[RMDB]
RNA sequence: GGGAACGACUCGAGUAGAGUCGAAAACAUCGCGUUUCACAAUGUGCGCCAUUAACAUUGUUUAUGCAAGCACGUUUCGCAAUGUACGGCGCAGAAACAUUGCCAACACAAAUACGCUUCACGAUGUAAAACAUCGGUGCGUUCGCGCACCGAUGAACUUUGGGAAAAGCUUCGGCUUUUCCCAAAGAAAAGAAACAACAACAACAAC
Reactivity to DMS in 0.01 (KOAc 150mM, MgCl2 10mM, bicine 150mM(pH8.5), 24C), signal-to-noise 2, nucleotides 027 to 156: c000a030u010c020g060c010g000u000u010u000c000a030c030a120a230u000g000u000g050c020g030c020c080a250u000u010a160a050c050a040u020u000g020u000u000u030a070u010g000c050a080a160g000c110a140c070g000u010u000u010c130g020c030a090a040u010g020u000a030c070g000g020c020g030c010a090g000a070a110a090c040a040u030u020g080c030c070a020a030c050a100c040a060a070a080u010a040c020g030c020u000u000c040a020c020g000a010u010g000u000a050a040a110a160c020a000u000c000g020g060u010g000c010g050u000u010c300g060c040g030c000a040c000c000g010a000u000g000a030a080
Reactivity to 2A3 in 0.01 (KOAc 150mM, MgCl2 10mM, bicine 150mM(pH8.5), 24C), signal-to-noise 4, nucleotides 027 to 156: c000a040u010c000g000c020g020u030u090u070c110a040c000a040a050u020g020u030g020c010g000c010c010a090u160u210a100a010c000a010u020u000g090u050u120u140a110u130g060c100a050a100g040c070a040c190g010u050u090u090c040g010c010a010a000u000g010u020a020c050g000g000c000g000c000a000g010a010a080a000c010a020u010u020g050c000c050a110a020c070a040c030a100a140a030u160a020c050g020c040u090u100c060a040c050g010a010u040g030u110a020a020a090a060c010a000u000c000g000g000u000g010c000g000u030u050c180g030c000g000c040a000c010c000g000a010u010g010a000a000